[RMDB]
RNA sequence: GGGAACGACUCGAGUAGAGUCGAAAAGAGCGGCAGAGGGACUGGCCCGAUGAAGCCCGGCAACCUACCUUUAUUUAAGCGUAAAGUGAAGGUGCUAAUUCCAGCAAAAUGGUGUAUUCCGUUUUGGUUUAUCCGCCCUGGUUCGCCAGGGCGGAAACAAUAAUUCUAACUUCGGUUAGAAUUAUUGAAAAGAAACAACAACAACAAC
Reactivity to DMS in 0.01 (KOAc 150mM, MgCl2 10mM, bicine 150mM(pH8.5), 24C), signal-to-noise 2, nucleotides 027 to 156: g030a130g030c040g030g060c040a070g000a180g010g010g010a130c040u000g020g050c030c010c010g000a150u000g010a090a170g010c020c000c010g000g000c020a050a040c010c000u000a120c080c000u000u000u000a010u000u010u010a120a210g050c280g020u000a030a030a050g010u010g010a100a060g000g010u000g010c030u000a060a140u000u000c020c010a090g010c050a030a030a060a070u010g000g030u010g010u000a120u010u000c010c010g020u000u000u000u000g000g010u010u000u000a100u000c020c010g030c020c000c000u010g050g020u000u010c300g010c020c000a010g000g000g030c000g000g000a010a000a030
Reactivity to 2A3 in 0.01 (KOAc 150mM, MgCl2 10mM, bicine 150mM(pH8.5), 24C), signal-to-noise 3, nucleotides 027 to 156: g040a020g020c200g010g000c010a000g000a010g000g010g000a030c010u020g020g000c000c010c020g020a080u000g010a010a000g000c000c000c000g000g000c010a120a090c000c000u110a110c000c010u020u010u020a060u030u190u110a190a050g080c020g060u000a000a010a020g040u070g140a090a010g000g000u010g000c000u000a070a030u110u030c010c000a010g010c020a020a020a000a020u040g000g000u040g040u120a110u150u040c010c010g010u000u000u010u030g030g010u030u080u140a070u020c010c010g000c010c000c020u010g030g000u080u070c100g030c060c010a000g000g000g010c000g000g000a000a010a000